This 177-nucleotide RNA was probed chemically with 2A3 and DMS. The RNA was probed in 150 mM KOAc, 10 mM MgCl2 and 150 mM bicine (pH 8.5) at 24 C. DMS adducts were read by reverse transcription with MarathonRT.

RNA sequence: GGGAACGACUCGAGUAGAGUCGAAAAGAAAGAACCUCUGCUCCCCCUCUCUAAUCCUUGCUAUCUGGGUGCUUAGUGCUAUCUCAAUGCAAUGCACCUGGGCAAGGGUUCAGAGAAGGUGAGCUAAUAGCUCACGAUCAUUCGUGAUCGUGAGCUAAAAAGAAACAACAACAACAAC
Reactivity to 2A3 in 0.01 (KOAc 150mM, MgCl2 10mM, bicine 150mM(pH8.5), 24C), signal-to-noise 4, nucleotides 027 to 126: g150a000a110a010g080a070a070c020c000u070c080u070g000c000u000c020c040c020c000c000u000c000u000c000u000a000a000u000c000c000u040u000g020c040u090a150u300c030u090g000g010g000u000g010c000u050u090a070g050u070g030c010u050a080u190c060u040c220a070a110u140g000c010a000a020u040g000c000a000c000c000u010g000g000g000c000a000a000g030g000g000u010u030c120a000g000a000g000a000a010g000g000u000g000a000g000c000u010a050a100
Reactivity to DMS in 0.01 (KOAc 150mM, MgCl2 10mM, bicine 150mM(pH8.5), 24C), signal-to-noise 1, nucleotides 027 to 126: g030a050a080a140g060a140a140c020c010u000c130u040g030c030u000c010c060c010c000c200u010c000u030c000u010a000a020u000c000c000u010u000g000c030u010a070u070c060u070g000g000g000u000g050c000u000u030a110g000u000g020c000u030a070u100c300u030c300a070a100u020g000c060a040a010u050g040c000a000c000c000u000g000g000g030c000a000a010g010g010g000u000u000c160a000g010a000g000a020a050g000g000u000g010a000g010c000u000a030a090

Values are in units of 0.01, from 0 to 300, in steps of 10.